[RMDB]
RNA sequence: GGGAACGACUCGAGUAGAGUCGAAAAAGCAGGCCAAAACUAGGUGGAUGAGCCUUCUUUAACUUGCAUUUCUAAAAUUACUCCAAUUCCAAUCGCUGGCACAUUCUAGGGCCAGGAACCAGUCUUGCCUACCAUUAUUAAUGCUUUAUUGUGCAAAAUUUAGCACGUCAUUCGUGACGUGCUAAAUAAAAGAAACAACAACAACAAC
Reactivity to DMS in 0.01 (KOAc 150mM, MgCl2 10mM, bicine 150mM(pH8.5), 24C), signal-to-noise 1, nucleotides 027 to 156: a130g020c030a070g030g010c020c040a100a080a050a080c050u000a080g000g040u000g000g010a180u000g000a210g000c000c040u000u000c040u040u000u010a100a010c040u000u010g000c020a300u000u000u000c170u010a080a000a070a120u010u000a050c020u010c000c020a130a230u000u010c120c020a050a160u000c070g010c040u000g020g000c020a010c050a150u000u010c100u010a110g020g010g010c020c030a150g000g050a110a050c020c010a020g020u000c010u000u000g000c040c030u000a130c040c020a060u000u000a090u000u010a020a120u010g020c010u000u000u000a050u010u000g010u010g000c040a040a090a140
Reactivity to 2A3 in 0.01 (KOAc 150mM, MgCl2 10mM, bicine 150mM(pH8.5), 24C), signal-to-noise 3, nucleotides 027 to 156: a000g010c020a010g010g000c020c020a040a060a040a090c070u070a050g100g000u040g030g110a110u040g020a020g050c030c000u020u030c010u020u090u050a060a090c040u060u100g010c020a070u050u060u090c020u090a120a080a120a160u090u040a030c030u000c040c030a000a060u140u010c030c020a030a060u040c060g010c110u020g010g000c030a010c030a100u110u110c050u130a080g000g050g030c000c000a000g020g000a010a010c010c010a020g020u020c030u040u050g000c000c010u050a050c000c010a040u060u100a060u110u140a140a040u060g030c010u030u170u120a090u210u180g070u060g010c010a120a030a090